[RMDB]
RNA sequence: GGGAACGACUCGAGUAGAGUCGAAAAUCUGGCUCAUAUAAGCUUGGGUUUUGUUCUAAUAGUUCUCUGCACUUCUUAUAAUAUGCCGACUUAACAUCACUCGAAAUAUUUAUUUUACAAACUCCUAAAAUCCAGGGUAGUUCGCUACCCUGGAUUUAAAAGAAACAACAACAACAAC
Reactivity to 2A3 in 0.01 (KOAc 150mM, MgCl2 10mM, bicine 150mM(pH8.5), 24C), signal-to-noise 2, nucleotides 027 to 126: u140c050u090g000g030c000u010c040a090u070a020u040a300a050g010c020u040u070g050g000g060u000u090u000u210g020u000u030c000u000a080a060u020a110g050u230u020c010u000c050u050g030c060a000c000u100u160c010u010u150a130u100a300a160u220a100u190g000c010c020g010a060c000u020u110a080a020c000a230u130c000a010c030u010c020g030a060a090a060u030a130u100u180u000a090u000u080u010u030a130c010a070a030a050c020u010c070c000u030a080
Notes:
This 177-nucleotide RNA was probed chemically with 2A3. Source: RMDB library OK1LIB, as collected in RNAgym. Reactivities are rounded to 0.1 and cut off at 0 and 3.